[RMDB]
RNA sequence: GGGAACGACUCGAGUAGAGUCGAAAAGAAAAUGAGUGCCUCACACUCAUGAGGAAAACAAAAUCUCACGAUAGGUGAGAACUAUCAAACAAAAUGCACUGUACGAGUGCACGUACAAAGAAAGAAAGGGAUACAAAGAGUUCGCUCUUUGUAUCCCAAAAGAAACAACAACAACAAC
Reactivity to DMS in 0.01 (KOAc 150mM, MgCl2 10mM, bicine 150mM(pH8.5), 24C), signal-to-noise 3, nucleotides 027 to 126: g000a100a010a070a030u030g030a020g000u030g020c120c080u070c110a280c000a010c000u000c010a000u000g000a150g010g000a150a100a050a120c280a030a060a160a110u000c030u000c090a090c100g000a030u000a020g030g000u000g000a000g000a130a030c100u000a030u000c020a090a120a160c150a080a060a150a150u000g000c000a020c010u000g020u110a160c180g000a080g010u000g000c020a040c030g010u000a090c110a020a060a080g020a060a010a080g010a170a020a100
Reactivity to 2A3 in 0.01 (KOAc 150mM, MgCl2 10mM, bicine 150mM(pH8.5), 24C), signal-to-noise 3, nucleotides 027 to 126: g110a010a170a020a030u180g010a000g010u020g040c000c000u100c020a080c000a000c020u000c000a010u020g010a060g130g050a000a130a010a000c070a070a020a000a150u010c020u020c030a120c080g150a120u090a020g080g020u000g000a020g000a000a000c000u050a030u040c010a020a030a180c020a040a240a090a000u100g000c040a000c040u060g020u230a050c120g070a030g020u050g000c060a000c010g000u030a050c060a090a140a040g100a090a030a000g080a090a070a000
Chemical mapping of a 177-nucleotide RNA with DMS and 2A3. The data come from the RNA Mapping Database (RMDB), library OK1LIB. 2A3 adducts were read by reverse transcription with SuperScript II with manganese. The reactions ran in a buffer of 150 mM KOAc, 10 mM MgCl2 and 150 mM bicine (pH 8.5), at 24 C.